[RMDB]
RNA sequence: GGGAACGACUCGAGUAGAGUCGAAAAUUGCCCUCCCUUCGUGGAGGUUCCUGGUCUCCGCGCGAUUACACGCCGGCGACUCAAGGCACCUACACGAACGGACGGUUCGUGUCUCUCCCUAAGAUCGCCCCUGUGGCAUCUUCGGAUGCCACAGGGGAAAAGAAACAACAACAACAAC
Reactivity to 2A3 in 0.01 (KOAc 150mM, MgCl2 10mM, bicine 150mM(pH8.5), 24C), signal-to-noise 1, nucleotides 027 to 126: u180u200g000c030c000c000u030c040c000c000u050u000c020g040u000g000g000a000g000g000u000u000c000c000u000g000g020u000c010u000c000c000g110c000g000c000g040a000u020u270a080c040a000c160g000c000c000g000g000c020g000a000c000u020c270a030a000g000g000c000a000c000c000u010a000c000a000c030g000a000a000c000g030g030a000c000g030g000u130u140c070g040u010g100u060c010u000c000u030c030c000c000u050a100a000g020a090u040c060g010
Chemical mapping of a 177-nucleotide RNA with 2A3. Values cover nucleotides 27 to 126. Conditions: 150 mM KOAc, 10 mM MgCl2 and 150 mM bicine (pH 8.5), 24 C. Reactivities are rounded to 0.1 and cut off at 0 and 3. 2A3 adducts were read by reverse transcription with SuperScript II with manganese.